Record summary
Structure probing data (2A3 and DMS) for a 177-nucleotide construct. The DMS profile rests on 1,491 reads. The data come from the RNA Mapping Database (RMDB), library OK2TST.

RNA sequence: GGGAACGACUCGAGUAGAGUCGAAAAGUGAAAACAUGUCUGUGGCCCAAGACCCACACACUGUGGAGCAAUGGAGUGCUGGAAAGCCAGAUGCUCAUUCCAAAAUCAUAUGCGGGCCCUUUUUCACACGGCCUAUAAAUUUCGAUUUAUAGGCCGUAAAAGAAACAACAACAACAAC
Reactivity to 2A3 in 0.01 (KOAc 150mM, MgCl2 10mM, bicine 150mM(pH8.5), 24C), signal-to-noise 2, nucleotides 027 to 126: g000u000g000a000a000a030a030c060a090u170g060u120c090u040g190u270g030g000c000c000c050a000a030g090a100c000c010c000a030c010a010c000a020c130u130g010u020g020g030a060g020c030a020a040u060g080g020a020g010u040g000c010u030g070g050a300a140a090g300c010c000a000g040a060u060g050c010u010c070a010u070u050c010c000a050a020a190a170u130c060a050u100a070u300g130c150g000g000g000c000c040c020u030u060u000u020u050c010a000c010
Reactivity to DMS in 0.01 (KOAc 150mM, MgCl2 10mM, bicine 150mM(pH8.5), 24C), signal-to-noise 2, nucleotides 027 to 126: g050u000g010a040a000a030a040c170a090u010g000u010c120u000g000u010g020g020c000c000c020a150a150g000a130c060c020c010a130c040a060c100a070c200u010g020u010g010g000a120g000c080a100a150u020g000g010a050g030u000g010c020u010g010g000a140a090a170g020c010c010a020g000a080u000g020c090u040c030a130u000u000c030c020a060a080a090a070u000c080a050u000a080u000g020c290g000g000g020c000c000c030u000u010u000u000u000c020a020c000
The RNA was probed in 150 mM KOAc, 10 mM MgCl2 and 150 mM bicine (pH 8.5) at 24 C.